[RMDB]
RNA sequence: GGGAACGACUCGAGUAGAGUCGAAAAUUGGAGGAGCAUGUGGUACAUCUCUGACAAGGUUCUUGAUGAGAGCAUUUCCAGAUCCUGUUACAGAAGGACUGUCAUUUUGGAAAUUGAUAUACGAGACCGGAGUAGGUGGAUUCGUCCACCUACUCCGAAAAGAAACAACAACAACAAC
Reactivity to 2A3 in 0.01 (KOAc 150mM, MgCl2 10mM, bicine 150mM(pH8.5), 24C), signal-to-noise 3, nucleotides 027 to 126: u100u070g020g010a030g010g010a010g010c050a010u000g080u140g020g010u120a110c060a030u010c010u000c000u050g030a020c010a010a000g010g000u110u020c000u040u210g090a120u140g050a070g030a020g060c060a110u000u020u000c000c000a040g010a120u010c020c000u120g050u190u070a060c060a050g090a120a000g090g180a060c000u030g070u060c050a110u030u140u170u120g030g000a030a020a010u120u050g010a030u000a030u070a220c090g010a010g040a040c000
Reactivity to DMS in 0.01 (KOAc 150mM, MgCl2 10mM, bicine 150mM(pH8.5), 24C), signal-to-noise 2, nucleotides 027 to 126: u010u000g020g000a300g000g000a040g000c160a030u010g070u010g010g030u000a300c010a010u000c000u000c010u000g010a300c060a040a020g000g010u030u070c010u020u000g010a080u000g000a120g000a190g010c140a050u000u000u010c000c010a030g000a080u000c030c050u010g000u000u020a190c290a160g010a110a060g000g020a010c060u000g000u060c040a120u000u000u000u020g000g020a030a020a000u020u000g000a000u020a100u020a040c050g000a120g030a120c040
An RNA of 177 nucleotides, treated with 2A3 and DMS and read out base by base. The 2A3 profile rests on 1,048 reads. Reactivities are given for positions 27 through 126.